Description: An RNA of 207 nucleotides, treated with 2A3 and DMS and read out base by base. For DMS, 4,757 sequencing reads were counted. Reactivities are given for positions 27 through 156. For 2A3, 1,539 sequencing reads were counted. The reactions ran in a buffer of 150 mM KOAc, 10 mM MgCl2 and 150 mM bicine (pH 8.5), at 24 C.

RNA sequence: GGGAACGACUCGAGUAGAGUCGAAAACCCUGUCAUGAGGCCGAAACGAAGGCACGUACCCCUUCGAAUGGCGUCGGGGAGUCAGCGGCUAUAUAUGCCCCUAAUGCUGGCAUCCGGGAACGAGCGUAUUAGACAGUAAUCUUCGGAUUACUGUCAAGUUAAAAUCAAUCUUCGGAUUGAUUUUAACAAAAGAAACAACAACAACAAC
Reactivity to 2A3 in 0.01 (KOAc 150mM, MgCl2 10mM, bicine 150mM(pH8.5), 24C), signal-to-noise 3, nucleotides 027 to 156: c010c000c020u040g140u090c100a110u160g080a010g080g040c030c000g090a100a080a030c010g000a020a000g030g070c100a020c030g140u130a120c020c020c000c020u030u020c030g050a110a120u190g000g040c000g050u010c010g030g010g010g010a090g010u020c000a000g020c000g050g010c050u000a020u000a020u040a050u300g040c020c000c000c040u190a160a030u290g010c030u020g010g000c010a090u020c020c020g030g020g030a100a080c030g010a040g060c050g010u090a100u100u110a150g000a000c000a000g000u000a000a000u000c020u010u020c100g090g000a000u000u000a000c000u000g000u000c000a000a000
Reactivity to DMS in 0.01 (KOAc 150mM, MgCl2 10mM, bicine 150mM(pH8.5), 24C), signal-to-noise 2, nucleotides 027 to 156: c000c000c020u010g010u010c040a100u010g030a060g000g010c000c030g020a090a150a180c060g020a070a050g020g030c070a140c090g010u010a160c040c060c000c020u010u000c010g010a160a110u010g010g020c010g000u000c040g000g000g000g010a280g010u010c020a050g010c000g010g050c040u010a180u000a130u000a120u010g020c010c010c090c040u000a070a120u000g020c010u020g020g010c020a080u010c040c030g040g030g010a100a100c030g010a130g000c050g010u000a140u010u000a140g000a030c000a020g010u000a000a000u000c000u000u010c300g080g010a030u010u000a000c000u000g000u000c000a000a050